Structure probing data (DMS and 2A3) for a 207-nucleotide construct.
RNA sequence: GGGAACGACUCGAGUAGAGUCGAAAACUCAUUCUAUUGCUCUCUACCUUUUUACAACCUAUGAGGGGCAUCUGUGUAUAUGUAUACCUACACAAGUACAUACACACACUGUGAAGUGUGCUGCAUUGUAGUGCCAUUGUUCUGAAGAUUGACAGAACUCACAAGGCUUAUUCGUAAGCCUUGUGAGAAAAGAAACAACAACAACAAC
Reactivity to DMS in 0.01 (KOAc 150mM, MgCl2 10mM, bicine 150mM(pH8.5), 24C), signal-to-noise 1, nucleotides 027 to 156: c040u020c030a100u000u000c030u000a060u000u000g000c000u010c070u000c030u000a050c080c010u000u000u000u020u040a160c040a050a150c040c070u000a120u000g020a100g000g030g030g040c030a070u000c040u010g030u000g000u000a050u000a050u010g040u000a160u000a150c140c030u000a070c060a040c090a070a170g010u020a000c000a050u010a030c020a050c020a000c000a030c050u000g030u010g000a110a050g050u000g040u000g010c070u000g000c000a060u000u000g000u000a030g010u000g020c030c020a110u020u010g010u020u000c020u000g020a080a120g010a120u000u010g020a200c050a110g020a070a240
Reactivity to 2A3 in 0.01 (KOAc 150mM, MgCl2 10mM, bicine 150mM(pH8.5), 24C), signal-to-noise 5, nucleotides 027 to 156: c010u020c010a090u200u040c060u190a180u120u080g030c000u010c000u020c020u050a170c040c010u160u110u080u080u130a110c090a110a100c050c000u100a080u150g040a060g010g030g030g000c010a060u060c060u030g010u000g010u010a020u000a020u150g100u040a050u040a110c040c040u110a020c040a000c010a080a040g030u010a010c010a030u050a020c000a000c000a000c000a000c030u030g070u060g170a100a040g030u010g000u020g050c060u000g010c020a070u050u070g020u050a040g020u000g050c030c000a080u110u100g010u030u020c040u020g070a090a050g060a230u030u130g000a020c020a030g040a050a050
For 2A3, 2,286 sequencing reads were counted. Conditions: 150 mM KOAc, 10 mM MgCl2 and 150 mM bicine (pH 8.5), 24 C. 2A3 is a SHAPE reagent: it acylates the 2'-hydroxyl of flexible nucleotides of all four kinds. For DMS, 2,586 sequencing reads were counted. For DMS the reverse transcriptase was MarathonRT.